[RMDB]
RNA sequence: GGGAACGACUCGAGUAGAGUCGAAAAGGAUCCUCUCACAGGAUUGUCUCUGUGUUUCGAAAAUCCUUCAGUUUUGCUUCGGGACACCAACAGCAAAACUGUUGGUAUAGAGACAAUGAGAGGAUCGCUUGUGCUGAGUAUUCGUACUUAGCACAAGAAAAGAAACAACAACAACAAC
Reactivity to 2A3 in 0.01 (KOAc 150mM, MgCl2 10mM, bicine 150mM(pH8.5), 24C), signal-to-noise 9, nucleotides 027 to 126: g020g000a000u000c010c010u000c000u010c010a090c060a130g260g130a170u030u020g010u010c000u000c000u010g050u000g060u140u200u250c120g090a060a040a030a110u080c010c000u020u020c010a020g000u010u010u020u030g010c010u030u060c060g030g020g040a080c090a080c140c010a040a050c030a060g000c000a000a010a010a020c000u000g000u000u010g000g000u020a030u040a020g000a000g000a000c000a010a030u070g000a000g000a000g000g000a000u000c000g000
Reactivity to DMS in 0.01 (KOAc 150mM, MgCl2 10mM, bicine 150mM(pH8.5), 24C), signal-to-noise 9, nucleotides 027 to 126: g010g000a000u000c000c000u000c010u000c010a180c290a200g010g010a080u000u000g000u000c000u000c000u000g020u010g010u000u000u010c160g000a100a090a110a090u010c010c010u000u000c030a020g010u000u000u000u000g010c040u000u000c300g000g000g000a080c300a100c020c010a020a170c280a010g000c020a020a020a020a060c000u000g010u000u000g000g010u000a020u000a010g000a010g000a010c000a010a020u000g000a010g010a010g010g000a000u000c010g000
This 177-nucleotide RNA was probed chemically with 2A3 and DMS. The DMS profile rests on 46,863 reads. For 2A3 the reverse transcriptase was SuperScript II with manganese. For DMS the reverse transcriptase was MarathonRT. Conditions: 150 mM KOAc, 10 mM MgCl2 and 150 mM bicine (pH 8.5), 24 C. 2A3 is a SHAPE reagent: it acylates the 2'-hydroxyl of flexible nucleotides of all four kinds. Reactivities are rounded to 0.1 and cut off at 0 and 3. For 2A3, 45,672 sequencing reads were counted.